Chemical mapping of a 177-nucleotide RNA with 2A3 and DMS. Conditions: 150 mM KOAc, 10 mM MgCl2 and 150 mM bicine (pH 8.5), 24 C. The 2A3 profile rests on 15,348 reads. It was measured as part of the RMDB library OK1LIB. Values cover nucleotides 27 to 126. For DMS the reverse transcriptase was MarathonRT.
RNA sequence: GGGAACGACUCGAGUAGAGUCGAAAAGAAGACGUGACGAAAAGUCACGAAAAAUAAAACAGGCAAGCUCCAGCCUGAAAAAGGAGCAAAGAUCGAAAGAUCACUCGUGGGAGACCACGAGAAAAGAACCUAAAUCGUAUUUCGAUACGAUUUAGGUAAAAGAAACAACAACAACAAC
Reactivity to 2A3 in 0.01 (KOAc 150mM, MgCl2 10mM, bicine 150mM(pH8.5), 24C), signal-to-noise 5, nucleotides 027 to 126: g130a030a040g110a040c020g000u010g000a000c020g070a120a110a110a110g000u000c000a000c000g020a010a010a000a010a000u230a010a050a020a020c160a000g000g000c020a020a130g000c000u000c000c000a020g010c010c000u010g060a060a000a000a000a010g000g000a010g000c010a040a060a010g000a000u020c020g030a080a020a040g010a020u010c000a010c050u010c000g000u000g010g000g000a070g040a030c000c000a000c010g010a000g010a010a020a000a000g010a020
Reactivity to DMS in 0.01 (KOAc 150mM, MgCl2 10mM, bicine 150mM(pH8.5), 24C), signal-to-noise 3, nucleotides 027 to 126: g020a130a060g030a200c020g010u010g000a010c000g000a070a070a100a200g010u000c000a000c000g000a010a020a040a140a020u060a050a050a180a100c120a020g000g000c000a030a080g010c000u000c010c000a070g010c000c000u000g000a000a030a040a050a050g000g050a000g010c000a080a060a090g010a010u000c000g000a110a070a190g000a010u010c000a230c010u000c000g040u000g010g000g000a260g000a160c000c000a000c000g020a000g000a040a050a040a090g000a110